The record gives the reactivity of an RNA of 307 nucleotides to DMS and 2A3. The reactions ran in a buffer of 150 mM KOAc, 10 mM MgCl2 and 150 mM bicine (pH 8.5), at 24 C. The data come from the RNA Mapping Database (RMDB), library POS240. For 2A3, 20,605 sequencing reads were counted.
RNA sequence: GGGAACGACUCGAGUAGAGUCGAAAACGGCAUGCUUCGGCAUGCCGAAGAUACCGGUGACGGUAUCAGCAUCAUCUUCGGAUGAUGCAACAUUCCGGUGACGGAAUGAAGCUAUUCUACGGAAUAGCAGAGAAUCUACGGAUUCUCAGACGAACGGUGACGUUCGUCAGUUCUGUCUACGGACAGAACAGAAGUGCGUGAGCACUUCAGCCAAGGCGUACGCGCCUUGGCCCUGGGUCGCAGUAACCCCAGUUAACAAAACAAGUAGCUACACAUUCGUGUGUAGCAAAAGAAACAACAACAACAAC
Reactivity to DMS in 0.01 (KOAc 150mM, MgCl2 10mM, bicine 150mM(pH8.5), 24C), signal-to-noise 2, nucleotides 027 to 266: c020g000g000c000a010u000g000c010u020u010c180g000g050c020a000u000g030c010c000g020a020a070g000a010u000a010c010c000g010g020u000g000a080c000g000g000u010a000u000c010a170g010c000a000u010c000a000u000c000u000u020c210g030g010a010u000g010a000u000g000c020a130a160c020a040u000u000c000c010g000g000u040g010a210c000g010g060a000a020u000g000a160a100g000c000u010a000u000u000c010u000a080c180g020g000a030a000u000a020g000c000a050g000a000g000a040a000u000c000u000a150c190g030g000a000u000u000c010u000c010a090g010a000c010g000a000a000c000g020g000u000g000a150c020g010u000u000c010g000u000c000a040g010u000u000c000u000g000u000c020u000a090c210g020g010a000c020a000g000a010a000c000a120g000a020a010g020u000g000c000g010u040g000a150g000c000a000c000u000u010c010a050g010c010c000a010a020g000g010c010g030u000a040c190g030c000g000c000c010u010u010g000g000c000c300c000u000g010g010g000u000c020g010c050a050g000u000a060a030c100c010c000c000a000g010u000u020a030a240c130a030a030a020a000c020a050a180g000u000a300
Reactivity to 2A3 in 0.01 (KOAc 150mM, MgCl2 10mM, bicine 150mM(pH8.5), 24C), signal-to-noise 6, nucleotides 027 to 266: c000g000g010c000a000u010g020c010u080u090c150g100g000c000a000u000g000c000c000g000a000a000g000a000u010a000c000c000g010g050u100g040a040c020g000g000u010a000u010c010a000g010c000a000u000c000a000u000c010u040u070c190g110g000a000u000g000a000u000g000c000a000a020c000a010u010u000c000c000g020g060u100g050a040c010g000g030a010a010u040g070a070a010g000c000u000a000u000u000c010u010a030c230g070g000a000a000u000a000g000c020a000g000a000g000a000a000u010c020u030a040c300g110g000a000u000u000c000u000c010a020g000a000c000g000a000a000c000g000g050u070g070a020c010g000u000u000c000g000u000c000a000g000u000u000c000u000g000u000c000u010a010c090g080g000a010c000a000g010a000a010c010a040g020a010a000g000u000g000c030g050u130g030a030g010c000a000c000u020u010c040a000g000c000c000a000a000g000g000c000g010u040a030c280g020c000g000c120c000u000u000g000g000c040c000c060u010g000g000g000u020c030g010c070a040g030u110a040a050c030c010c010c010a030g050u100u110a040a020c030a030a030a010a000c050a040a050g200u240a030